[RMDB]
RNA sequence: GGGAACGACUCGAGUAGAGUCGAAAAGAAAGCGUGUGGCUGCGAUGCAGGUCGUAUGACCGGCCAAAUGCGACUCUUGCGCGCGAAAGUCCUUGAUGCUGAUAGGCCGGUUAUAGCAUCGGACGAAGGGCGUGCGCGUCUUCGGAUGCGUGUGCCCAAAAGAAACAACAACAACAAC
Reactivity to 2A3 in 0.01 (KOAc 150mM, MgCl2 10mM, bicine 150mM(pH8.5), 24C), signal-to-noise 9, nucleotides 027 to 126: g090a020a060a000g020c020g010u090g020u040g110g020c020u020g000c030g050a040u190g020c010a010g000g020u010c000g010u040a090u140g040a050c000c000g000g000c000c000a090a140a060u200g000c000g020a020c010u030c030u070u130g010c020g000c000g000c010g060a110a040a010g010u000c010c000u040u230g000a010u010g000c010u020g030a060u050a090g010g000c000c000g000g000u020u050a110u060a010g000c000a000u000c000g000g010a010c010g010a070a100
Reactivity to DMS in 0.01 (KOAc 150mM, MgCl2 10mM, bicine 150mM(pH8.5), 24C), signal-to-noise 9, nucleotides 027 to 126: g010a110a070a100g010c030g020u010g020u000g010g010c020u010g010c010g010a090u030g020c010a050g010g000u000c000g030u000a060u020g010a050c000c010g000g000c010c020a080a090a070u030g010c010g000a030c030u020c080u030u020g020c020g000c020g010c020g010a090a090a100g000u000c000c010u020u040g020a010u000g010c000u000g010a200u020a090g000g000c000c000g000g000u000u000a090u030a030g000c010a010u000c000g010g010a020c020g010a110a120